[RMDB]
RNA sequence: GGGAACGACUCGAGUAGAGUCGAAAAGAUAUGGAAACCAGUUGGGAGCUACGUUCGGAAACGAACGAAUAGCGACGAUCAAUGGUUUCCUAAGUCAAAGCUUCUACGUCUUCGGACGUAGAAGCAACUAAUAUUCACCCUUCGGGGUGAAUAUUAGAAAAGAAACAACAACAACAAC
Reactivity to 2A3 in 0.01 (KOAc 150mM, MgCl2 10mM, bicine 150mM(pH8.5), 24C), signal-to-noise 1, nucleotides 027 to 126: g000a000u030a000u050g000g020a000a000a000c000c000a040g290u180u040g050g090g040a050g000c000u000a010c010g000u000u010c000g000g020a010a010a010c000g000a000a000c010g020a080a050u070a010g000c000g110a130c080g050a050u010c000a030a070u000g010g000u000u000u000c000c000u010a020a010g010u010c060a300a000a000g010c020u000u000c000u000a000c020g000u000c000u010u100c300g160g000a000c000g000u000a010g000a000a000g000c000a000a000
Reactivity to DMS in 0.01 (KOAc 150mM, MgCl2 10mM, bicine 150mM(pH8.5), 24C), signal-to-noise 3, nucleotides 027 to 126: g010a010u000a090u020g000g000a020a000a020c000c000a020g000u000u010g020g010g020a060g010c000u000a070c000g000u000u010c000g020g000a020a020a070c000g000a010a010c000g010a100a140u000a020g000c000g010a120c300g000a090u010c010a030a070u000g010g000u000u000u000c000c000u000a000a070g000u000c000a130a140a160g020c000u000u000c000u010a000c000g010u000c000u000u020c220g030g000a030c000g010u000a010g000a010a000g000c000a000a050
An RNA of 177 nucleotides, treated with 2A3 and DMS and read out base by base. For 2A3, 5,727 sequencing reads were counted.